The record gives the reactivity of an RNA of 207 nucleotides to 2A3 and DMS. For DMS the reverse transcriptase was MarathonRT. The data come from the RNA Mapping Database (RMDB), library OK3TST. Conditions: 150 mM KOAc, 10 mM MgCl2 and 150 mM bicine (pH 8.5), 24 C. High DMS reactivity at an A or C suggests that its Watson-Crick edge is free.
RNA sequence: GGGAACGACUCGAGUAGAGUCGAAAAGAUGAGGAAAUACAACUCCAGAGAUUCCUUCAGUGAUCAAGAUCAGUGGGCCAUAAUAUUUGGUUAGAGUUUCUGAGAACACAGGAAGCAAUGCCACACUCAGGCCACCACAAUGGAGCUGAUUUGGCAAGUACCCUAAUUAUUUCGAUAAUUAGGGUACAAAAGAAACAACAACAACAAC
Reactivity to 2A3 in 0.01 (KOAc 150mM, MgCl2 10mM, bicine 150mM(pH8.5), 24C), signal-to-noise 4, nucleotides 027 to 156: g080a050u130g010a030g030g090a060a100a050u180a130c060a100a060c050u040c060c020a020g040a010g000a210u050u070c010c000u090u110c050a030g040u020g080a100u050c070a080a040g020a070u060c010a040g050u060g030g070g000c020c010a020u090a270a030u090a290u080u110u100g010g010u040u100a050g000a010g110u010u090u060c040u000g020a030g030a090a010c060a010c010a050g050g030a040a020g030c030a040a130u110g020c000c000a050c000a010c070u020c020a040g030g080c020c020a050c030c000a070c080a040a080u120g020g030a060g080c010u020g010a040u040u040u070g020g000c000a060a030
Reactivity to DMS in 0.01 (KOAc 150mM, MgCl2 10mM, bicine 150mM(pH8.5), 24C), signal-to-noise 2, nucleotides 027 to 156: g030a110u010g020a110g050g000a040a080a140u000a090c070a120a120c020u000c000c000a070g000a150g010a190u000u000c010c000u000u000c040a110g010u000g010a090u000c040a090a120g010a120u010c030a040g010u000g000g000g000c010c010a070u000a030a100u000a090u000u000u000g030g040u000u010a090g010a160g020u000u010u000c030u000g010a140g020a060a070c040a070c100a080g000g000a040a050g020c030a100a150u000g000c010c010a050c090a050c100u000c020a060g040g010c000c050a110c000c080a070c080a110a090u000g010g000a110g050c010u000g000a080u000u000u000g000g010c000a030a200